[RMDB]
RNA sequence: GGGAACGACUCGAGUAGAGUCGAAAAGAGAAUGGCUCAGCUCUAUGCUGGAAAUCUCCAGUGUUUACAUUGCGAAAACAAUUGAAAUCAUAACAAUAAAAUCAAAUUCGAAAUUUGUGAGUACGCGUGACUCAAGGACGUUCGCGUCCUUGAGUCAAAAAGAAACAACAACAACAAC
Reactivity to 2A3 in 0.01 (KOAc 150mM, MgCl2 10mM, bicine 150mM(pH8.5), 24C), signal-to-noise 1, nucleotides 027 to 126: g040a010g060a000a170u120g100g030c000u000c050a000g000c030u000c070u030a090u000g050c090u100g120g000a190a100a000u040c000u050c010c000a000g000u000g000u030u000u000a050c120a130u000u180g060c000g100a000a000a000a000c000a100a100u000u080g120a000a000a080u030c130a050u150a240a160c200a000a020u030a300a110a000a010u170c150a000a270a170u150u160c120g060a000a000a270u000u000u110g080u000g000a000g000u010a000c080g000c000g200
Reactivity to DMS in 0.01 (KOAc 150mM, MgCl2 10mM, bicine 150mM(pH8.5), 24C), signal-to-noise 1, nucleotides 027 to 126: g000a150g000a080a240u000g020g050c030u150c020a200g000c000u000c070u020a030u030g000c000u000g000g000a000a290a120u000c000u140c000c190a100g120u060g110u000u000u220a020c200a030u000u070g000c000g000a270a000a000a300c140a020a000u000u020g000a070a030a050u000c190a120u000a080a140c160a050a100u020a000a000a020a050u000c030a000a020a000u000u000c270g020a000a140a140u000u000u050g000u100g100a000g050u000a000c190g100c000g000
The record gives the reactivity of an RNA of 177 nucleotides to 2A3 and DMS. It was measured as part of the RMDB library RFM100.